Structure probing data (2A3 and DMS) for a 207-nucleotide construct.
For DMS, 2,788 sequencing reads were counted.
For DMS the reverse transcriptase was MarathonRT.
The reactions ran in a buffer of 150 mM KOAc, 10 mM MgCl2 and 150 mM bicine (pH 8.5), at 24 C.
Source: RMDB library RSTRND, as collected in RNAgym.
For 2A3, 1,671 sequencing reads were counted.
RNA sequence: GGGAACGACUCGAGUAGAGUCGAAAAGUAUGGUCAAAACAUCGAGGAAAAGGAUGAUCCGCAGCGAAACCCUCUUGUUGUACAAAAGUGGGUGGCGUUCACAGACUAAACGGCGAUGGGUUCCAGAAAUUCGAAACCUGGGCUUAAGAUGUAGUCGCCUCAUACAUAACUUCGGUUAUGUAUGAGGAAAAGAAACAACAACAACAAC
Reactivity to 2A3 in 0.01 (KOAc 150mM, MgCl2 10mM, bicine 150mM(pH8.5), 24C), signal-to-noise 2, nucleotides 027 to 156: g060u070a060u160g010g020u060c050a010a080a020a040c010a050u070c030g010a070g030g030a040a090a060a020g020g010a020u020g010a030u040c070c060g000c030a020g030c010g040a080a030a020c010c010c000u010c000u040u040g040u020u060g060u100a060c050a030a130a000a000g000u040g000g000g000u020g030g000c000g000u020u040c040a060c000a060g040a040c010u030a050a120a050c010g020g010c010g010a010u040g010g040g000u130u000c020c000a010g020a020a080a010u150u110c060g010a020a010a050c000c000u020g000g030g000c010u080u040a030a000g000a100u100g030u050a010g100u030c020g020
Reactivity to DMS in 0.01 (KOAc 150mM, MgCl2 10mM, bicine 150mM(pH8.5), 24C), signal-to-noise 1, nucleotides 027 to 156: g010u000a070u000g020g040u010c070a020a030a140a110c030a050u000c010g000a130g000g000a080a060a090a140g010g030a210u000g000a080u000c000c010g060c060a090g020c030g010a070a030a060c030c000c000u000c010u000u000g000u010u000g000u000a240c120a040a030a020a060g000u000g010g010g020u000g020g000c010g000u030u020c050a060c050a080g000a020c000u010a060a090a090c000g040g000c000g000a130u000g000g010g010u000u000c000c040a120g010a020a130a170u000u000c110g000a050a040a050c080c000u010g020g000g000c020u000u000a070a080g010a150u000g000u000a060g000u000c020g020